[RMDB]
RNA sequence: GGGAACGACUCGAGUAGAGUCGAAAAAGGACUUUUUGCCCUUCAUGCACAUUGGCUAAGUAAAUCCUGGUGGAUUUCUUACGUAAUUUUAAACCAUCAGAAACUUCCGAGGACUGUGAAUGGUUCGGUGGAUGCAAGAAUUCGUUCUUGCAUCCACAAAAGAAACAACAACAACAAC
Reactivity to 2A3 in 0.01 (KOAc 150mM, MgCl2 10mM, bicine 150mM(pH8.5), 24C), signal-to-noise 1, nucleotides 027 to 126: a000g030g000a100c000u080u170u050u120u100g040c050c000c000u010u020c020a010u100g040c050a070c030a130u010u170g040g000c030u040a040a000g020u080a070a000a040u000c050c040u080g060g010u050g000g000a060u080u050u000c010u040u070a010c080g080u040a040a220u090u100u010u160a010a070a060c010c000a000u020c000a000g070a100a130a010c060u040u000c010c090g000a100g090g100a110c040u010g030u050g220a010a070u000g020g100u070u010c050g050
Reactivity to DMS in 0.01 (KOAc 150mM, MgCl2 10mM, bicine 150mM(pH8.5), 24C), signal-to-noise 1, nucleotides 027 to 126: a030g000g000a040c040u000u020u010u000u010g020c020c000c030u010u000c070a100u000g020c110a070c090a070u000u010g000g090c300u010a020a060g010u000a050a010a100u000c050c000u000g000g020u000g040g010a050u000u000u010c080u000u000a040c160g000u020a080a090u010u010u010u010a050a090a100c010c020a050u000c050a030g000a090a100a100c080u000u020c110c030g000a060g020g010a110c060u000g000u020g020a030a050u000g020g010u000u020c080g020